[RMDB]
The record gives the reactivity of an RNA of 177 nucleotides to 2A3 and DMS. Reactivities are given for positions 27 through 126. Conditions: 150 mM KOAc, 10 mM MgCl2 and 150 mM bicine (pH 8.5), 24 C. Reactivities are rounded to 0.1 and cut off at 0 and 3. Source: RMDB library OK2TRN, as collected in RNAgym.

RNA sequence: GGGAACGACUCGAGUAGAGUCGAAAAGAAUUGCCAUCAGUGCUGCAGAGCAGUGUGGGCGAUUGGAUGUGCCGAAAAUUGGUGAACCGAAAGAAUUUGGUCAUUGUCUAAACCGUGAUGCUGAUGACACCCGUGUCCUUUUCGAAGGACACGGGUGAAAAGAAACAACAACAACAAC
Reactivity to 2A3 in 0.01 (KOAc 150mM, MgCl2 10mM, bicine 150mM(pH8.5), 24C), signal-to-noise 1, nucleotides 027 to 126: g020a000a050u140u070g040c030c010a020u040c010a050g100u040g060c030u000g060c060a000g020a040g300c060a000g020u040g000u130g150g000g020c050g020a020u040u010g110g100a030u090g000u040g000c000c000g070a070a070a030a070u190u270g000g000u060g050a080a110c070c020g010a170a090a000g230a120a150u090u020u110g000g010u030c040a080u030u140g000u000c070u120a150a110a110c020c000g010u080g080a040u100g000c080u040g010a000u060g030a020
Reactivity to DMS in 0.01 (KOAc 150mM, MgCl2 10mM, bicine 150mM(pH8.5), 24C), signal-to-noise 1, nucleotides 027 to 126: g010a060a080u000u010g000c010c000a170u010c010a110g000u000g020c000u000g000c180a070g040a040g040c030a000g010u010g010u000g010g010g020c020g000a010u000u010g030g040a030u000g000u000g010c020c020g000a060a050a060a080u000u000g000g040u000g000a090a100c070c020g000a060a090a110g010a070a070u000u000u020g000g000u000c050a090u010u000g000u010c040u010a020a080a020c070c080g030u000g000a060u000g040c120u000g020a110u000g000a200